[RMDB]
RNA sequence: GGGAACGACUCGAGUAGAGUCGAAAAAAUGCAGGAUCCACUGUUUACUACCCAAAUGAAAAAGACUGCGAAACAAGAGGUGAUCAUGUUUUUUGUGACACAGCAGCAGGGAUCAAUGUUGCUGAGCCGCGAAGAAAUCAUUCGUGAUUUCUUCGCGAAAAGAAACAACAACAACAAC
Reactivity to DMS in 0.01 (KOAc 150mM, MgCl2 10mM, bicine 150mM(pH8.5), 24C), signal-to-noise 1, nucleotides 027 to 126: a040a010u000g000c020a000g020g010a040u000c050c070a270c050u020g000u000u000u000a100c170u020a170c000c020c010a130a100a180u030g000a080a050a060a070a120g000a070c080u000g000c070g000a100a050a060c050a090a090g020a070g000g030u000g000a100u000c110a060u000g010u000u000u000u000u020u000g000u010g000a140c090a100c000a020g080c030a040g000c000a030g000g010g020a060u000c060a110a040u000g000u000u000g000c000u000g010a010g060c130
This 177-nucleotide RNA was probed chemically with DMS. The RNA was probed in 150 mM KOAc, 10 mM MgCl2 and 150 mM bicine (pH 8.5) at 24 C. Reactivities are given for positions 27 through 126. It was measured as part of the RMDB library OK2TRN.